[RMDB]
RNA sequence: GGGAACGACUCGAGUAGAGUCGAAAAAGAUAUGGAGGAGCGUAGGGAACUUGACCCUGCUGUGACUCGGAAACGAGUCCAGCAGCAAGGUGCCCCCGAGGGGAGCCCUACGCUCCUCCUAAGUCGAGAUUAAAGUGUAGUUCGCUACACUUUAAUCAAAAGAAACAACAACAACAAC
Reactivity to DMS in 0.01 (KOAc 150mM, MgCl2 10mM, bicine 150mM(pH8.5), 24C), signal-to-noise 3, nucleotides 027 to 126: a140g000a010u000a000u010g000g010a020g010g000a020g000c000g040u000a000g000g000g010a070a240c010u000u000g000a120c250c300c020u010g000c000u010g020u020g000a020c000u010c010g010g010a020a010a040c000g020a020g010u000c000c010a010g000c010a010g000c040a030a020g010g000u000g010c040c010c000c010c300g020a140g030g010g010g000a070g010c000c000c010u000a000c000g010c010u000c000c010u000c000c000u000a000a050g000u000c010g000a190